This 177-nucleotide RNA was probed chemically with DMS and 2A3. The data come from the RNA Mapping Database (RMDB), library TTRDES. DMS (dimethyl sulfate) methylates the pairing face of unpaired adenines and cytosines. For 2A3, 15,791 sequencing reads were counted. DMS adducts were read by reverse transcription with MarathonRT. For 2A3 the reverse transcriptase was SuperScript II with manganese.
[RMDB]
RNA sequence: GGGAACGACUCGAGUAGAGUCGAAAAGAUAUGGAUUGACCUAGAUUAGAGCCUACUCGGAAACGAGUAUGCUCGACGAUCUAGGUUCAAUCCUAAGUCAAAACUGUGAUGGUUCGCCAUCACAGAAGAUAUACGCAAGGUUCGCCUUGCGUAUAUCAAAAGAAACAACAACAACAAC
Reactivity to DMS in 0.01 (KOAc 150mM, MgCl2 10mM, bicine 150mM(pH8.5), 24C), signal-to-noise 6, nucleotides 027 to 126: g000a040u010a300u010g000g010a020u000u000g010a020c000c000u000a000g020a030u000u000a300g000a020g010c000c040u000a010c000u000c000g010g000a120a090a210c000g000a020g020u000a000u000g000c000u000c000g010a100c300g010a010u000c010u000a000g000g000u010u000c000a010a000u000c000c000u000a020a100g000u000c050a100a080a140a220c000u000g010u000g000a010u000g000g000u010u020c300g020c000c000a010u000c000a000c000a000g000a050a070
Reactivity to 2A3 in 0.01 (KOAc 150mM, MgCl2 10mM, bicine 150mM(pH8.5), 24C), signal-to-noise 4, nucleotides 027 to 126: g030a010u060a050u140g010g000a000u020u000g010a020c010c000u000a010g020a060u070u090a070g000a010g010c000c020u010a010c000u000c000g030g050a070a070a050c010g000a010g000u010a010u010g010c010u010c010g000a010c040g040a030u020c010u010a000g000g010u020u020c000a000a000u000c000c000u000a020a010g010u000c050a020a010a160a200c010u000g000u000g010a010u000g000g110u080u110c300g080c110c010a000u020c000a000c000a000g000a010a010